[RMDB]
Conditions: 150 mM KOAc, 10 mM MgCl2 and 150 mM bicine (pH 8.5), 24 C. This 177-nucleotide RNA was probed chemically with 2A3 and DMS. For DMS, 9,526 sequencing reads were counted.
RNA sequence: GGGAACGACUCGAGUAGAGUCGAAAACAUAAAAGGAAACACUUAUGAUCUAAUGGAUCUUCUUAGGCGUGGGUUUGAUGCUAAAGAGUCUGACUUGGAUAGGGUAACCAUUAUUAGGAAAAACAUCGAAGUAGAGAUACUUCGGUAUCUCUACUUCAAAAGAAACAACAACAACAAC
Reactivity to 2A3 in 0.01 (KOAc 150mM, MgCl2 10mM, bicine 150mM(pH8.5), 24C), signal-to-noise 9, nucleotides 027 to 126: c030a020u260a120a110a030a010g170g020a130a100a010c080a030c050u110u090a080u210g050a060u030c030u060a130a050u190g050g020a020u020c000u070u010c010u060u080a050g060g000c040g030u030g020g070g010u050u110u110g080a080u060g020c030u070a080a050a040g040a020g030u010c030u050g090a120c020u040u090g040g010a030u070a080g040g000g050u050a040a020c020c020a010u040u070a070u100u120a130g060g030a070a090a020a010a030c040a050u150c100
Reactivity to DMS in 0.01 (KOAc 150mM, MgCl2 10mM, bicine 150mM(pH8.5), 24C), signal-to-noise 5, nucleotides 027 to 126: c080a110u030a020a030a080a110g000g020a110a060a090c070a070c090u010u020a050u020g000a090u010c020u020a090a060u040g010g000a030u010c060u010u010c080u010u010a100g010g020c070g010u010g000g020g020u010u010u010g010a020u010g010c060u000a020a070a050g000a060g020u000c040u000g020a100c050u000u010g000g020a070u010a040g000g000g000u000a040a120c040c040a050u000u010a060u020u020a060g010g020a070a040a050a060a050c190a090u060c150